Source: RMDB library TTRDEL, as collected in RNAgym. An RNA of 177 nucleotides, treated with DMS and 2A3 and read out base by base. The 2A3 profile rests on 2,893 reads. The RNA was probed in 150 mM KOAc, 10 mM MgCl2 and 150 mM bicine (pH 8.5) at 24 C. For 2A3 the reverse transcriptase was SuperScript II with manganese.
RNA sequence: GGGAACGACUCGAGUAGAGUCGAAAAGAUAUGGAAGUCAAAUCGAAGAACGUGGCUCCCCACCUCGGAAACGAGAGGCCACGGGAGAUUACUGACUUCCUAAGUCAAACUACUCUUCGGAGUAGAACCGAUAAUCUAACUUCGGUUAGAUUAUCGGAAAAGAAACAACAACAACAAC
Reactivity to DMS in 0.01 (KOAc 150mM, MgCl2 10mM, bicine 150mM(pH8.5), 24C), signal-to-noise 2, nucleotides 027 to 126: g000a010u000a100u010g000g000a020a010g040u000c000a020a020a010u000c000g020a130a230g020a090a240c030g020u000g010g040c000u000c040c010c030c040a300c210c010u000c000g010g000a040a010a050c010g000a050g020a130g000g000c010c000a000c000g060g000g010a020g020a010u000u000a040c200u030g000a010c010u000u000c000c000u000a000a070g010u000c010a180a090a190c000u000a010c000u000c000u000u010c180g030g010a010g010u000a010g000a060a160
Reactivity to 2A3 in 0.01 (KOAc 150mM, MgCl2 10mM, bicine 150mM(pH8.5), 24C), signal-to-noise 2, nucleotides 027 to 126: g000a020u040a000u080g000g000a000a020g010u000c010a040a020a050u040c020g160a300a010g000a040a010c000g020u010g000g010c000u040c060c040c010c060a300c120c000u000c010g020g020a010a040a030c030g000a000g000a020g100g000c000c010a000c050g000g030g020a020g010a000u010u100a180c140u040g000a000c000u000u000c000c000u010a030a010g010u020c030a020a060a130c010u000a000c000u000c000u050u120c300g160g000a020g020u020a010g010a000a020